Conditions: 150 mM KOAc, 10 mM MgCl2 and 150 mM bicine (pH 8.5), 24 C.
Chemical mapping of a 207-nucleotide RNA with DMS and 2A3.
2A3 adducts were read by reverse transcription with SuperScript II with manganese.
In probing experiments dimethyl sulfate is read out at A N1 and C N3, which are open when not base-paired.
For DMS, 2,154 sequencing reads were counted.
[RMDB]
RNA sequence: GGGAACGACUCGAGUAGAGUCGAAAAAGACCACCUCUAGGGAGGUGGUCAAGUCACGUAGCUAGUACCAGGUUGCAAUACUAGAGCGUUAGUCCUGGGGCGUACGGUGGCAGUACGCUGCCACCGAUAAAACUUGAAUACUUCGGUAUUCAAGUAACCAUAAGCAGGAGUUCGCUCCUGCUUAUGGAAAAGAAACAACAACAACAAC
Reactivity to DMS in 0.01 (KOAc 150mM, MgCl2 10mM, bicine 150mM(pH8.5), 24C), signal-to-noise 1, nucleotides 027 to 156: a110g020a020c000c020a000c000c000u000c000u010a250g060g040g000a000g000g040u030g050g000u000c010a020a000g020u010c170a160c040g040u010a070g030c000u000a040g000u000a050c080c000a040g010g020u010u000g000c000a110a110u000a050c010u000a000g020a300g010c000g030u000u000a010g020u000c010c000u010g010g000g010g020c090g020u010a050c000g120g010u000g040g110c000a060g030u010a050c240g000c020u000g010c000c010a010c010c000g000a010u000a030a030a140a100c000u000u000g010a010a030u000a000c010u010u000c300g030g000u020a020u000u010c010a010a010g030u010a010a100
Reactivity to 2A3 in 0.01 (KOAc 150mM, MgCl2 10mM, bicine 150mM(pH8.5), 24C), signal-to-noise 2, nucleotides 027 to 156: a010g010a010c000c020a000c000c020u030c000u120a130g100g300g070a010g020g000u010g000g000u010c010a000a000g020u010c000a010c030g000u020a000g130c010u000a010g020u060a190c000c000a010g000g020u020u000g000c000a010a000u000a000c000u010a010g020a010g010c080g100u140u200a000g040u080c000c000u010g010g000g010g040c100g020u170a070c030g050g000u000g010g000c000a000g000u030a030c300g030c090u000g000c000c000a000c000c000g000a000u010a010a050a000a020c000u000u010g000a000a000u000a000c010u010u030c150g050g000u010a000u010u000c000a000a000g000u010a010a030

It was measured as part of the RMDB library M2RFPK.